[RMDB]
RNA sequence: GGGAACGACUCGAGUAGAGUCGAAAAUACGCAGGUUGUAAUUACAGUGCUUUGUUUUGGGGAAGUACUGCUGUUAUCCUGCUGAAAGACAAGCUGUGUUAGUCAUUUUUGAUUUUGCCUUUAUGAGCAUGAAUGAAGACUUCGGUCUUCAUUCAUGAAAAGAAACAACAACAACAAC
Reactivity to DMS in 0.01 (KOAc 150mM, MgCl2 10mM, bicine 150mM(pH8.5), 24C), signal-to-noise 6, nucleotides 027 to 126: u010a100c260g000c000a010g000g000u050u020g020u000a000a010u010u020a130c020a010g010u000g010c000u000u000u010g000u000u020u020u030g010g010g010g000a020a010g010u000a010c000u000g000c070u010g000u000u000a020u010c000c000u000g000c000u000g000a060a100a080g000a060c080a070a080g000c080u010g010u010g010u010u000a090g000u020c020a090u000u000u000u020u010g000a070u000u000u010u000g000c030c030u000u010u020a110u030g010a110g010
Reactivity to 2A3 in 0.01 (KOAc 150mM, MgCl2 10mM, bicine 150mM(pH8.5), 24C), signal-to-noise 9, nucleotides 027 to 126: u200a040c060g000c010a010g010g020u140u150g050u150a000a030u060u080a010c000a000g000u000g010c000u080u040u070g260u180u190u210u280g120g020g020g000a000a000g000u000a000c000u000g000c040u010g010u000u000a020u050c000c000u000g000c000u000g030a060a030a000g050a020c050a050a060g030c090u070g020u040g080u270u130a030g020u030c040a070u030u040u040u090u090g120a160u030u060u080u130g060c020c010u080u150u060a120u190g080a040g060